Record summary
Source: RMDB libraries RFM100 and RFMREP, as collected in RNAgym. An RNA of 177 nucleotides, treated with 2A3 and read out base by base. The reactions ran in a buffer of 150 mM KOAc, 10 mM MgCl2 and 150 mM bicine (pH 8.5), at 24 C.
RNA sequence: GGGAACGACUCGAGUAGAGUCGAAAACCAUCCCCUCCCAUUCGCUAGAAUGUUGCAGGUGGAGAUUUCGCUCUUAUGUUUUCUCGAUGCCUCCCAUUCCUAUCGUUCUUGGAACUUCCUUCCUCUUGACUCGAUCCAUCUUCGGAUGGAUCGAGUCAAAAGAAACAACAACAACAAC
Reactivity to 2A3 in 0.01 (KOAc 150mM, MgCl2 10mM, bicine 150mM(pH8.5), 24C), signal-to-noise 2, nucleotides 027 to 126: c100c010a080u080c000c000c020c010u010c000c020c000a000u000u010c000g080c070u070a110g010a020a000u060g040u140u030g120c140a000g000g070u210g100g020a040g000a000u010u020u030c050g010c000u000c010u060u130a150u210g100u100u090u050u030c030u010c030g060a060u060g010c010c000u030c010c000c000a010u030u000c010c010u040a060u090c020g050u070u010c010u010u040g010g010a020a030c010u010u030c040c010u030u070c000c010u060c010u030u020